[RMDB]
RNA sequence: GGGAACGACUCGAGUAGAGUCGAAAAGUGCCAUCAAUCCAAGCAUUUCACGUUAAUAAGUGCAGAUUUGCAAAUAGAUGUAACAAAAAACUGGAUAUUUGUAAUAAUCAAUCUCCUAAAAUGCAUGAAUAAUCAUGUAAUUCGUUACAUGAUUAUUAAAAGAAACAACAACAACAAC
Reactivity to 2A3 in 0.01 (KOAc 150mM, MgCl2 10mM, bicine 150mM(pH8.5), 24C), signal-to-noise 9, nucleotides 027 to 126: g070u060g060c030c000a070u120c040a050a060u040c050c030a070a020g020c010a030u040u060u100c080a050c080g030u070u120a210a060u150a300a040g040u020g030c020a020g030a080u050u040u030g000c010a010a020a010u030a030g060a090u080g050u120a110a050c130a090a130a060a050a010a020c050u050g130g060a020u020a020u020u020u030g030u030a070a190u070a090a020u080c020a020a060u030c030u040c060c010u120a100a090a050a040u070g010c030a040u100g030
Reactivity to DMS in 0.01 (KOAc 150mM, MgCl2 10mM, bicine 150mM(pH8.5), 24C), signal-to-noise 6, nucleotides 027 to 126: g010u010g000c020c040a080u030c120a070a070u010c070c090a090a090g020c020a020u000u010u010c070a050c090g010u020u030a110a070u040a080a090g000u000g010c120a070g010a040u010u000u000g010c010a010a020a020u000a010g000a150u020g000u010a070a110c150a010a090a070a080a080a040c050u010g000g010a190u000a010u010u010u010g000u010a020a060u020a060a050u020c050a050a070u010c060u010c020c010u000a040a030a030a070u010g010c040a050u010g000